[RMDB]
RNA sequence: GGGAACGACUCGAGUAGAGUCGAAAAAAAGAAUCACAGGACAGUGGCCUUGGAAGAACUAUUAGAAAGCAUACAUCCUCUUCUCUCCUUAAAUACAUGAGCAAAUGGAGGCCUGUAGAAAUCCAGGAGAGUAUAAGUGGUUCGCCACUUAUACUCUAAAAGAAACAACAACAACAAC
Reactivity to DMS in 0.01 (KOAc 150mM, MgCl2 10mM, bicine 150mM(pH8.5), 24C), signal-to-noise 2, nucleotides 027 to 126: a050a060a060g010a140a070u010c050a040c100a040g010g000a060c080a070g020u010g000g000c000c030u010u030g020g000a120a070g000a080a050c060u000a050u010u000a140g010a070a030a060g030c060a090u010a060c070a090u000c040c010u010c050u010u000c020u010c050u010c020c030u000u000a030a030a060u000a050c100a050u000g000a080g020c060a020a060a070u010g000g020a110g000g000c040c020u000g040u000a060g010a080a090a090u000c070c030a030g000g000
Reactivity to 2A3 in 0.01 (KOAc 150mM, MgCl2 10mM, bicine 150mM(pH8.5), 24C), signal-to-noise 2, nucleotides 027 to 126: a000a000a000g100a080a020u090c060a050c060a070g060g020a040c020a110g090u050g060g010c030c010u040u140g080g010a100a010g020a130a080c040u060a130u200u080a040g080a090a070a010g050c010a010u030a140c020a050u060c000c000u030c120u130u040c000u020c000u000c020c060u100u100a060a110a000u090a060c060a070u120g040a060g080c040a080a000a170u060g020g010a010g010g000c000c010u000g000u000a060g040a110a090a000u040c010c010a030g000g050

An RNA of 177 nucleotides, treated with DMS and 2A3 and read out base by base. It was measured as part of the RMDB library OK2TRN. For DMS, 1,642 sequencing reads were counted. Values are in units of 0.01, from 0 to 300, in steps of 10. For DMS the reverse transcriptase was MarathonRT.